[RMDB]
RNA sequence: GGGAACGACUCGAGUAGAGUCGAAAACACAGCAGCAGGAAGGAGAAGAAUGACCAAAGGUAGGAGAAAGCCCCUUAUAAAGCCAUCAGAUCUCGUGAGAACUGAGUAUCAGAAGAAUAGCAUGGAGGUAACCGCCCCCAUGAUUCAAUUACCUCCAGACUAAAUUACCAUUCGUGGUAAUUUAGUCAAAAGAAACAACAACAACAAC
Reactivity to 2A3 in 0.01 (KOAc 150mM, MgCl2 10mM, bicine 150mM(pH8.5), 24C), signal-to-noise 1, nucleotides 027 to 156: c010a000c030a020g080c050a020g030c000a000g010g100a050a010g000g010a030g000a000a040g050a040a060u140g020a000c010c030a050a070a040g040g030u030a010g010g040a050g020a040a070a010g020c020c010c010c020u030u080a130u050a110a100a030g000c050c040a030u020c010a020g050a080u000c030u070c070g000u090g040a080g000a090a050c040u050g000a000g020u000a070u070c020a000g070a100a000g050a040a090u100a090g060c030a030u050g020g000a020g010g000u000a010a030c070c070g040c000c000c000c000c000a020u080g000a000u050u120c050a040a090u020u000a000c010c030u000c030c000a000
Reactivity to DMS in 0.01 (KOAc 150mM, MgCl2 10mM, bicine 150mM(pH8.5), 24C), signal-to-noise 1, nucleotides 027 to 156: c060a060c050a080g040c090a170g030c020a060g000g020a100a130g000g000a030g010a140a070g060a090a100u000g010a070c090c030a030a100a070g010g040u000a070g020g010a130g000a070a030a170g000c030c050c010c070u010u000a110u000a060a140a060g000c030c030a080u000c000a090g000a070u000c060u000c010g000u000g010a160g000a070a300c040u000g000a040g030u040a070u010c050a070g000a060a060g000a040a040u000a090g030c030a130u000g010g020a000g010g000u010a030a090c030c100g000c090c010c000c020c020a100u000g000a110u000u000c020a000a040u000u010a070c010c040u000c000c000a140